RNA sequence: GGGAACGACUCGAGUAGAGUCGAAAAUGCAAGUCAAGGGAGAGUUUGUUGGUUUAUUUUAGGCUGAUAGAUUUGUUCUAGAGUUUCAACUGUUCUACAUGUGGCAUGUAGUGGAGCAUAAUUCUUCAUUCUGAGGACUGUUCCUUGCUUGGCAAGAACUAUAGGUGGAUUUCGAUCCACCUAUAGUAAAAGAAACAACAACAACAAC
Reactivity to 2A3 in 0.01 (KOAc 150mM, MgCl2 10mM, bicine 150mM(pH8.5), 24C), signal-to-noise 6, nucleotides 027 to 156: u080g000c000a020a010g090u270c020a020a020g000g030g000a060g000a020g040u070u050u120g080u070u100g070g080u120u130u100a160u060u170u050u090a040g040g000c030u030g030a070u050a110g030a020u040u060u090g030u030u010c020u040a040g010a040g190u040u100u160c070a100a050c020u040g070u130u050c010u030a010c010a020u060g070u180g260g070c040a010u020g000u020a010g020u040g020g010a010g010c010a020u080a200a050u180u030c010u030u010c010a040u080u010c040u080g020a030g020g020a010c010u030g140u090u020c000c000u010u010g000c000u020u010g060g010c010a040a010g060a060
Reactivity to DMS in 0.01 (KOAc 150mM, MgCl2 10mM, bicine 150mM(pH8.5), 24C), signal-to-noise 4, nucleotides 027 to 156: u000g020c040a100a070g000u000c040a070a160g010g000g010a080g010a080g020u000u000u010g030u010u010g010g010u000u000u000a090u020u000u000u000a090g020g020c020u000g000a080u000a070g010a110u000u000u010g010u000u000c030u010a050g010a100g040u000u000u000c050a090a050c030u010g010u000u010c010u000a020c030a040u010g040u000g050g020c090a070u000g010u000a040g020u000g000g010a050g000c020a110u000a100a060u000u000c010u000u010c030a100u010u000c060u000g020a170g020g020a050c180u000g010u000u000c020c010u010u000g010c030u010u000g020g010c040a060a120g010a100
Structure probing data (2A3 and DMS) for a 207-nucleotide construct. For DMS, 12,477 sequencing reads were counted. For DMS the reverse transcriptase was MarathonRT. 2A3 adducts were read by reverse transcription with SuperScript II with manganese. The 2A3 profile rests on 4,199 reads. The reactions ran in a buffer of 150 mM KOAc, 10 mM MgCl2 and 150 mM bicine (pH 8.5), at 24 C.